Structure probing data (DMS and 2A3) for a 177-nucleotide construct.
The data come from the RNA Mapping Database (RMDB), library OK2TST.
The reactions ran in a buffer of 150 mM KOAc, 10 mM MgCl2 and 150 mM bicine (pH 8.5), at 24 C.
For 2A3 the reverse transcriptase was SuperScript II with manganese.
For 2A3, 2,425 sequencing reads were counted.
The DMS profile rests on 2,013 reads.
RNA sequence: GGGAACGACUCGAGUAGAGUCGAAAAGUCGAGACUAAACCGGGGCGUGGGGGUGGUGUCUAUCCGACCAAGGACGCCGUUCUUCUCGUGCGAUCGGGUGGUAGGGUCACGAUCGUCCGACGCGGUGGUCCAGCAAACAAUUCGUUGUUUGCUGGACAAAAGAAACAACAACAACAAC
Reactivity to DMS in 0.01 (KOAc 150mM, MgCl2 10mM, bicine 150mM(pH8.5), 24C), signal-to-noise 2, nucleotides 027 to 126: g010u000c020g000a100g010a110c080u000a040a100a100c060c010g010g000g010g020c100g020u000g000g000g020g000g020u010g020g020u000g010u000c030u000a100u010c070c030g000a100c060c120a130a140g000g000a070c020g000c010c000g000u000u010c070u000u010c120u000c000g010u000g010c040g000a070u010c040g000g000g030u000g000g010u010a110g000g010g000u000c060a160c040g000a030u000c020g000u000c110c020g000a030c190g010c030g010g030u000g010
Reactivity to 2A3 in 0.01 (KOAc 150mM, MgCl2 10mM, bicine 150mM(pH8.5), 24C), signal-to-noise 2, nucleotides 027 to 126: g080u070c040g010a010g020a130c020u140a070a080a080c020c030g000g000g030g000c050g030u070g020g060g030g010g000u040g060g000u050g010u030c020u040a090u120c050c000g050a060c050c020a070a040g080g030a020c020g000c040c000g020u070u020c020u140u010c030u020c030g030u090g000c000g020a100u030c020g030g070g010u050g010g050u070a040g000g000g050u070c030a000c060g000a000u000c020g030u000c040c020g000a030c030g000c030g000g030u070g020